Description
Chemical mapping of a 177-nucleotide RNA with 2A3 and DMS. For 2A3 the reverse transcriptase was SuperScript II with manganese. DMS adducts were read by reverse transcription with MarathonRT. For DMS, 11,977 sequencing reads were counted. Conditions: 150 mM KOAc, 10 mM MgCl2 and 150 mM bicine (pH 8.5), 24 C.
[RMDB]
RNA sequence: GGGAACGACUCGAGUAGAGUCGAAAACACAUGCCAUCAUAUCGGUUAAGAACUCUUAACUCUGAUGGCUUUCGAGUUAUGUGGUGCAUUGAAGCUCUCCGUUCAAUUCAACGUACCGUUCCGUCAAGAUCACCUAUGUAUUCGUACAUAGGUGAUCAAAAGAAACAACAACAACAAC
Reactivity to 2A3 in 0.01 (KOAc 150mM, MgCl2 10mM, bicine 150mM(pH8.5), 24C), signal-to-noise 9, nucleotides 027 to 126: c050a000c010a050u120g000c020c010a000u010c010a010u090a070u270c070g030g000u010u010a010a020g070a290a240c070u030c000u300u000a000a000c000u000c030u080g000a010u000g000g000c000u000u030u010c010g010a010g010u040u050a120u220g160u180g030g030u020g000c020a030u020u030g030a030a030g030c020u010c030u030c110c060g070u110u090c050a060a070u040u010c010a020a010c020g010u010a010c010c000g000u020u000c020c010g090u100c090a100a030
Reactivity to DMS in 0.01 (KOAc 150mM, MgCl2 10mM, bicine 150mM(pH8.5), 24C), signal-to-noise 9, nucleotides 027 to 126: c070a110c140a080u010g010c000c000a010u000c000a030u010a120u000c300g000g000u000u000a010a000g000a240a170c300u010c010u000u000a010a000c000u000c100u010g000a010u000g010g010c010u000u000u000c050g010a060g010u000u000a060u010g010u000g020g010u000g020c020a050u000u000g000a020a030g010c060u000c080u000c090c060g010u000u000c080a090a120u000u000c020a030a030c050g020u000a020c020c010g000u000u000c010c010g010u000c090a070a110